About this RNA
An RNA of 207 nucleotides, treated with 2A3 and DMS and read out base by base. The data come from the RNA Mapping Database (RMDB), library ARCHII. 2A3 adducts were read by reverse transcription with SuperScript II with manganese. Conditions: 150 mM KOAc, 10 mM MgCl2 and 150 mM bicine (pH 8.5), 24 C.
RNA sequence: GGGAACGACUCGAGUAGAGUCGAAAAGUGGUAUUCGUACCACCAAGGAAAGGUAUACCGCCCCAGGCUGGUAAACAGAGCAGGGAAAAGCCCUCGCUCUUGGUAGUGGGAGGAUCUCGUAUCAGAAUUCUGAUGUGCAAAGCUCCGUUCGCGGAGCGAAUAUUUCCCGUUUCGACGGGAAAUAUUCAAAAGAAACAACAACAACAAC
Reactivity to 2A3 in 0.01 (KOAc 150mM, MgCl2 10mM, bicine 150mM(pH8.5), 24C), signal-to-noise 3, nucleotides 027 to 156: g010u020g000g010u010a030u030u160c200g020u020a000c000c010a000c020c010a010a050g090g020a160a050a010g080g010u090a090u040a120c010c010g020c020c010c000c010a040g070g000c070u090g020g080u090a070a070a040c040a030g010a000g000c000a000g000g010g050a020a290a050a130g170c000c000c000u020c090g010c000u010c000u020u040g020g010u040a030g060u090g010g000g030a040g040g020a040u020c050u030c090g040u080a050u070c020a060g120a170a110u300u100c010u080g070a070u060g050u030g120c070a150a080a040g030c010u030c060c050g000u050u060c220g030c020g060g000a000g000c010
Reactivity to DMS in 0.01 (KOAc 150mM, MgCl2 10mM, bicine 150mM(pH8.5), 24C), signal-to-noise 2, nucleotides 027 to 156: g010u010g020g030u000a060u000u020c260g060u000a020c000c010a000c010c080a120a120g000g010a080a080a120g010g000u010a100u000a080c030c030g020c010c000c030c020a180g020g020c040u000g040g030u000a070a090a130c080a060g020a020g030c000a040g010g020g020a120a160a140a280g000c040c010c010u010c130g010c000u010c000u010u000g020g020u000a080g000u000g030g000g000a080g000g010a120u000c020u010c020g030u000a020u000c020a050g000a150a190u000u000c020u010g010a080u000g000u000g020c060a080a060a170g020c000u000c010c000g040u000u000c300g050c040g020g010a050g020c010
For 2A3, 1,610 sequencing reads were counted. For DMS, 4,093 sequencing reads were counted. DMS adducts were read by reverse transcription with MarathonRT.